[RMDB]
RNA sequence: GGGAACGACUCGAGUAGAGUCGAAAAGAUAUGGAGUAACGAGGAUCAGCGAAUCCAACAGCAUUCUCGAGCUUCGGAAACGAAGCUCGAGAAUGACAUGGAUACGCUGGGAGUUACUCCUAAGUCAGUUGAGUUAUAUGUUCGCAUAUAACUCAACAAAAGAAACAACAACAACAAC
Reactivity to 2A3 in 0.01 (KOAc 150mM, MgCl2 10mM, bicine 150mM(pH8.5), 24C), signal-to-noise 3, nucleotides 027 to 126: g040a000u090a080u240g000g000a000g010u000a010a000c010g110a300g160g040a060u020c000a000g000c010g020a040a020u000c010c020a030a050c080a120g070c000a010u020u010c010u020c020g020a010g000c010u000u040c000g020g030a070a060a040c010g000a000a000g000c030u000c000g020a000g010a000a000u000g000a010c000a010u020g000g000a000u020a060c000g000c010u000g000g010g010a030g000u000u000a000c000u000c000c000u010a020a000g080u040c090a030
Reactivity to DMS in 0.01 (KOAc 150mM, MgCl2 10mM, bicine 150mM(pH8.5), 24C), signal-to-noise 5, nucleotides 027 to 126: g010a060u000a300u000g000g000a000g010u000a010a020c010g020a130g010g000a090u010c000a000g010c000g010a180a030u000c000c000a010a090c300a240g010c000a010u000u000c000u000c000g000a010g010c000u000u000c000g000g000a100a140a260c000g010a010a010g010c000u010c000g000a000g000a000a000u000g000a020c080a190u000g000g000a020u000a060c010g020c010u000g000g000g000a060g010u000u000a000c010u000c010c000u000a000a050g000u000c060a140